[RMDB]
RNA sequence: GGGAACGACUCGAGUAGAGUCGAAAACAGCGAGUUGUAGAUGUCGGAGACCUCGAACUGGAAGUUGGGGUGCGCCGAGGUGAUGUGCUCCUGGCACCACGCGAUGGCUUUCUGCGAGAUAUCGAAGGAGUUAGUACUAGUUCGCUAGUACUAACUCAAAAGAAACAACAACAACAAC
Reactivity to 2A3 in 0.01 (KOAc 150mM, MgCl2 10mM, bicine 150mM(pH8.5), 24C), signal-to-noise 7, nucleotides 027 to 126: c030a010g040c030g060a060g040u030u050g060u140a060g010a140u090g060u090c020g020g020a030g020a040c000c000u000c050g100a090a060c030u080g090g130a110a060g040u050u040g010g010g000g030u050g020c100g000c020c010g020a040g000g080u090g020a150u090g030u050g020c010u020c010c030u030g030g000c010a020c020c000a020c030g040c020g060a060u090g020g000c040u020u070u030c010u050g030c030g020a060g000a040u110a030u150c040g000a070a040g100
Reactivity to DMS in 0.01 (KOAc 150mM, MgCl2 10mM, bicine 150mM(pH8.5), 24C), signal-to-noise 9, nucleotides 027 to 126: c050a070g010c080g010a070g010u000u000g010u010a070g010a100u010g010u000c020g010g010a110g010a050c030c010u000c020g010a040a060c050u000g010g010a100a120g020u000u000g010g000g000g020u000g020c100g030c030c010g010a050g010g020u010g010a080u010g010u000g000c030u000c050c070u010g010g000c050a070c030c030a050c080g000c060g010a070u010g000g000c060u000u000u000c040u000g010c060g000a090g010a110u000a090u000c040g010a150a130g010